This 177-nucleotide RNA was probed chemically with DMS. The reactions ran in a buffer of 150 mM KOAc, 10 mM MgCl2 and 150 mM bicine (pH 8.5), at 24 C. It was measured as part of the RMDB library TTRINS.
[RMDB]
RNA sequence: GGGAACGACUCGAGUAGAGUCGAAAAGAUAUGGAGUACCCAGACGAUAAGAUCGCUGUAACGCCUUUCUCGGAAACGAGAAAGGCGUUAGUGAACGAUCUUUUGACGUCUGUGGUACUCCUAAGUCGAACAUUUAUAACUUCGGUUAUAAAUGUUCAAAAGAAACAACAACAACAAC
Reactivity to DMS in 0.01 (KOAc 150mM, MgCl2 10mM, bicine 150mM(pH8.5), 24C), signal-to-noise 5, nucleotides 027 to 126: g000a140u010a300u010g000g010a020g020u000a000c000c000c000a010g000a020c000g010a170u000a020a010g010a010u000c000g030c050u010g010u000a010a000c000g010c000c000u000u000u000c000u000c000g000g000a090a120a270c000g010a020g010a000a010a010g000g010c010g000u000u000a000g030u010g010a080a130c000g000a010u000c000u000u000u000u000g020a220c120g000u000c000u000g010u010g020g010u000a000c000u000c000c000u000a000a060g010u020c120